RNA sequence: GGGAACGACUCGAGUAGAGUCGAAAAGAAGAGAAUAAAUAGAGGAGUCAGGGUUCGCACACGCUCCGCGAACCGACGGUAACACUGACUGUGGAGCGGAAAAGGCAGAUACCGAACUGCCAAAGAAAAUGGUGCGUAAUUUCGAUUACGCACCAUUAAAAGAAACAACAACAACAAC
Reactivity to DMS in 0.01 (KOAc 150mM, MgCl2 10mM, bicine 150mM(pH8.5), 24C), signal-to-noise 3, nucleotides 027 to 126: g010a120a090g000a070g000a110a170u000a090a030a020u030a060g020a120g010g000a050g030u000c000a070g000g000g020u000u000c010g000c040a060c100a090c060g000c010u010c020c030g010c000g050a010a000c020c070g020a090c190g010g030u020a060a050c140a300c050u000g010a020c030u000g010u040g020g000a050g000c020g010g000a100a070a120a070g010g000c000a010g000a080u010a210c180c100g000a120a190c000u000g000c000c000a000a020a070g010a040a030
Reactivity to 2A3 in 0.01 (KOAc 150mM, MgCl2 10mM, bicine 150mM(pH8.5), 24C), signal-to-noise 3, nucleotides 027 to 126: g080a030a010g150a000g030a050a060u240a130a060a050u250a090g070a050g150g050a010g010u030c010a030g050g010g130u020u010c010g000c000a020c000a000c120g000c020u000c000c020g000c000g000a000a010c000c000g010a050c040g000g030u110a080a000c020a010c070u010g020a020c030u090g160u150g070g000a000g010c000g030g020a050a060a020a020g020g000c010a010g020a010u090a240c010c060g000a010a030c020u010g010c000c000a020a020a000g070a030a130
About this RNA: Structure probing data (DMS and 2A3) for a 177-nucleotide construct. It was measured as part of the RMDB library OK1LIB. DMS adducts were read by reverse transcription with MarathonRT. The RNA was probed in 150 mM KOAc, 10 mM MgCl2 and 150 mM bicine (pH 8.5) at 24 C. For 2A3 the reverse transcriptase was SuperScript II with manganese. Reactivities are rounded to 0.1 and cut off at 0 and 3. Values cover nucleotides 27 to 126.